[RMDB]
RNA sequence: GGGAACGACUCGAGUAGAGUCGAAAAAAAAUAACAGCUAAGUCAAACACGAUGCGAUUCUCAAGAUGCUCAAUGGUGGCUUCAAGCAAAGCCUCCACGCGCACAUCCAAAAACAAAAGAACAGCAAAAGAAGGGGCAUGUUCUAAUUCCUCAAUCACUAAUACCCCGAGUUCGCUCGGGGUAUUAGAAAAGAAACAACAACAACAAC
Reactivity to 2A3 in 0.01 (KOAc 150mM, MgCl2 10mM, bicine 150mM(pH8.5), 24C), signal-to-noise 1, nucleotides 027 to 156: a000a020a000a020u140a060a040c050a010g020c130u090a060a000g050u120c130a280a100a020c090a050c110g090a010u050g020c020g000a020u080u040c030u030c020a010a010g030a040u050g000c000u070c080a090a070u090g000g000u050g000g000c040u030u060c100a210a160g040c150a180a000a000g000c000c000u000c020c020a010c000g000c000g000c000a020c000a010u030c000c020a000a020a020a240a240c040a180a080a000a000g010a010a010c000a010g020c000a020a120a000a000g040a020a080g030g040g040g000c040a030u070g000u030u000c000u030a000a120u020u000c010c020u070c010a040a040u090c060a050